[RMDB]
Chemical mapping of a 177-nucleotide RNA with DMS and 2A3. Reactivities are given for positions 27 through 126. 2A3 adducts were read by reverse transcription with SuperScript II with manganese.
RNA sequence: GGGAACGACUCGAGUAGAGUCGAAAAUCUUCAUAAGAGAACAUUUCCAUUACGAAUUCAGUCGCAAAUUGUAGAAUUAGCUACUCUACGAUUUAGUGAGCGUUAGUAACGUUGUAAUAUAAUAUAGCCAAAGCUAUAUUUUCGAAUAUAGCUUUGGAAAAGAAACAACAACAACAAC
Reactivity to DMS in 0.01 (KOAc 150mM, MgCl2 10mM, bicine 150mM(pH8.5), 24C), signal-to-noise 5, nucleotides 027 to 126: u000c010u000u000c070a150u040a150a290g000a030g010a020a090c100a140u010u000u000c000c010a170u030u000a060c050g010a100a100u030u010c130a110g000u010c010g010c010a030a010a010u010u000g000u000a000g000a000a010u000u000a180g000c120u030a140c070u000c010u000a010c000g010a000u000u000u000a080g020u000g010a100g010c040g000u000u010a080g010u010a040a050c140g010u000u010g000u000a080a070u010a060u020a060a110u030a120u030a150g000
Reactivity to 2A3 in 0.01 (KOAc 150mM, MgCl2 10mM, bicine 150mM(pH8.5), 24C), signal-to-noise 5, nucleotides 027 to 126: u020c010u110u050c030a100u060a240a060g020a010g020a060a050c040a080u030u070u030c020c010a060u070u120a040c030g070a090a110u160u130c050a070g130u020c020g000c020a000a000a000u020u010g000u010a010g010a030a040u050u010a030g040c030u050a040c010u000c000u000a000c000g010a010u000u010u110a060g000u020g030a050g060c020g030u020u100a070g010u060a090a010c050g000u000u030g020u020a110a040u040a020u070a190a160u160a040u120a110g030